[RMDB]
RNA sequence: GGGAACGACUCGAGUAGAGUCGAAAAGCCCUUUGUACACACCGCCCGUCGCACCUACCGAUUGGAUAUUGUGACGAACCUUGCAGAGUGAGUUCUAUUCAGCAAUGGAUAGUAUUUACGAAGUCAUCGUAAAAACCCAUUUCGAUGGGUUUUUACGAAAAGAAACAACAACAACAAC
Reactivity to DMS in 0.01 (KOAc 150mM, MgCl2 10mM, bicine 150mM(pH8.5), 24C), signal-to-noise 2, nucleotides 027 to 126: g010c000c000c000u050u010u030g030u030a070c080a090c070a060c100c140g020c010c020c030g000u000c070g040c070a080c100c020u000a120c080c030g000a160u000u010g000g070a030u020a040u000u000g000u010g010a110c030g030a060a070c060c050u010u010g020c030a110g000a300g020u010g070a010g000u000u030c000u000a010u000u010c000a000g000c300a160a110u020g000g000a000u000a000g020u070a040u000u000u020a030c000g000a240a100g000u000c140a090u000
Reactivity to 2A3 in 0.01 (KOAc 150mM, MgCl2 10mM, bicine 150mM(pH8.5), 24C), signal-to-noise 3, nucleotides 027 to 126: g020c000c000c010u020u060u090g040u030a030c030a000c000a000c020c000g040c010c010c000g010u020c000g000c020a070c000c020u080a080c020c020g090a130u020u130g010g020a010u050a060u100u160g030u020g030a010c010g030a050a060c020c010u070u120g000c030a020g010a010g090u000g020a000g000u010u000c000u000a010u000u010c000a000g030c040a080a140u030g000g010a000u000a000g000u010a040u000u010u020a000c000g020a090a010g040u060c020a030u010